This 207-nucleotide RNA was probed chemically with 2A3 and DMS. DMS adducts were read by reverse transcription with MarathonRT. The RNA was probed in 150 mM KOAc, 10 mM MgCl2 and 150 mM bicine (pH 8.5) at 24 C. For DMS, 1,731 sequencing reads were counted. 2A3 adducts were read by reverse transcription with SuperScript II with manganese.
RNA sequence: GGGAACGACUCGAGUAGAGUCGAAAACAGCAAAAAGGAACCGAUUCCCACCAAGUUCGGAAAGAGAUACCGGGCGAGGCGCUGAAGAAAGAAUCUCGCUUCAGACACCCCAAGGACUCGGCUGAAGAAUGCACGCCAUCGUUCGCGAUGGCGUGAACACAUUGUAUGACUUCGGUCAUACAAUGUGAAAAGAAACAACAACAACAAC
Reactivity to 2A3 in 0.01 (KOAc 150mM, MgCl2 10mM, bicine 150mM(pH8.5), 24C), signal-to-noise 4, nucleotides 027 to 156: c010a010g020c020a030a070a090a120a060g110g010a060a000c040c010g080a110u030u020c010c000c020a020c060c040a090a020g030u030u030c020g030g050a120a110a020g070a030g010a030u070a090c010c000g030g020g000c070g030a070g030g030c120g010c050u050g020a030a010g030a020a290a030g050a130a160u050c110u070c200g020c000u020u000c050a050g040a110c010a110c040c010c000c040a020a060g020g000a010c020u010c080g000g000c020u040g010a030a010g050a110a040u150g080c000a000c000g000c000c000a000u010c000g070u050u090c250g000c000g140a010u000g000g000c000g010u000g000a000a000
Reactivity to DMS in 0.01 (KOAc 150mM, MgCl2 10mM, bicine 150mM(pH8.5), 24C), signal-to-noise 1, nucleotides 027 to 156: c070a160g010c050a050a070a060a130a140g030g010a020a120c010c030g000a160u020u000c000c000c000a130c090c020a150a150g070u000u000c000g030g000a120a130a090g010a160g010a160u020a100c000c000g000g000g000c020g030a090g010g000c020g010c030u000g010a020a050g020a090a090a080g000a100a090u000c070u000c080g000c020u010u020c000a060g000a300c010a050c000c010c040c090a140a170g010g010a020c020u010c050g020g000c010u000g000a130a050g000a050a060u010g000c000a020c000g000c000c040a020u010c020g000u000u020c300g060c010g040a020u000g020g040c020g030u000g000a000a050